The record gives the reactivity of an RNA of 207 nucleotides to 2A3 and DMS. For DMS the reverse transcriptase was MarathonRT. It was measured as part of the RMDB library OK3TST.

[RMDB]
RNA sequence: GGGAACGACUCGAGUAGAGUCGAAAAACUCUGAUCAAUUUCAUUCGAUUGAGUAGGCAUCUGUCACCUUCUGCGGUCAACUCAUCCUUCACUCCGGGUCGAAUCGCGAGUGUUUCCAAUGUAUCAAACUCGAGGAGAGCUGGUAAGGAGUUGCAGACGACGAUACUAAGUUCGCUUAGUAUCGUCGAAAAGAAACAACAACAACAAC
Reactivity to 2A3 in 0.01 (KOAc 150mM, MgCl2 10mM, bicine 150mM(pH8.5), 24C), signal-to-noise 4, nucleotides 027 to 156: a000c030u020c050u140g030a050u050c070a070a140u110u240u200c110a100u120u130c080g080a070u020u100g030a020g020u040a050g040g040c040a090u050c110u100g090u100c020a040c050c000u050u020c020u070g010c050g060g030u050c030a000a060c020u030c050a130u100c030c020u070u040c030a020c060u000c000c010g080g070g060u030c020g030a080a060u070c050g020c040g050a020g010u030g020u010u050u030c050c010a070a070u140g030u090a080u150c060a080a070a050c020u020c040g020a010g050g000a020g010a010g040c020u000g010g000u060a080a090g040g010a030g020u020u030g030c000a000g010a040
Reactivity to DMS in 0.01 (KOAc 150mM, MgCl2 10mM, bicine 150mM(pH8.5), 24C), signal-to-noise 2, nucleotides 027 to 156: a100c040u000c020u000g040a080u010c040a050a090u000u010u010c090a190u000u000c070g020a050u000u010g000a060g080u000a060g000g040c070a050u000c060u000g020u010c050a080c020c040u000u000c060u000g040c040g000g000u020c010a060a030c040u000c030a090u000c010c010u000u000c060a110c030u000c010c070g010g020g020u000c000g020a100a070u010c000g010c050g010a040g010u000g020u000u000u010c020c050a110a150u000g040u000a170u010c030a090a050a050c030u000c000g040a140g000g000a300g000a050g030c030u010g020g000u000a040a110g020g000a130g020u000u000g000c010a080g020a250